[RMDB]
RNA sequence: GGGAACGACUCGAGUAGAGUCGAAAAGAUAUGGAUCAGGGAAACUUAGUAGGCUCGUUGAAAUCGGAAACGAUGGAGAGCUACUAAGGCUGAUCCUAAGUCAAACGCUAACCUUCGGGUUAGCGAAGUUAGGAUGAUGGUUCGCCAUCAUCCUAACAAAAGAAACAACAACAACAAC
Reactivity to DMS in 0.01 (KOAc 150mM, MgCl2 10mM, bicine 150mM(pH8.5), 24C), signal-to-noise 3, nucleotides 027 to 126: g010a050u010a300u020g000g050a010u000c000a030g000g020g010a160a140a160c000u000u000a010g000u010a040g020g000c000u000c000g000u000u010g040a130a140a020u000c000g000g000a090a090a160c020g010a020u000g000g000a110g000a020g010c000u010a000c010u000a000a010g000g010c010u000g010a010u000c000c010u000a010a070g010u000c040a070a090a230c040g010c000u000a010a010c000c000u010u010c210g010g000g020u000u000a000g000c000g020a000a000
Reactivity to 2A3 in 0.01 (KOAc 150mM, MgCl2 10mM, bicine 150mM(pH8.5), 24C), signal-to-noise 3, nucleotides 027 to 126: g030a000u080a030u150g010g000a000u010c000a010g080g050g240a180a120a140c000u010u010a010g010u010a040g300g260c000u000c000g150u250u040g000a030a030a000u010c010g000g000a100a030a050c010g000a000u000g030g020a010g000a000g010c000u000a000c000u000a000a000g000g000c010u000g000a000u010c000c010u000a100a010g040u000c040a050a040a070c030g000c010u010a000a020c010c000u030u040c300g110g000g010u010u000a000g000c020g000a040a000
The data come from the RNA Mapping Database (RMDB), library TTRDEL. The record gives the reactivity of an RNA of 177 nucleotides to DMS and 2A3. For 2A3, 6,127 sequencing reads were counted.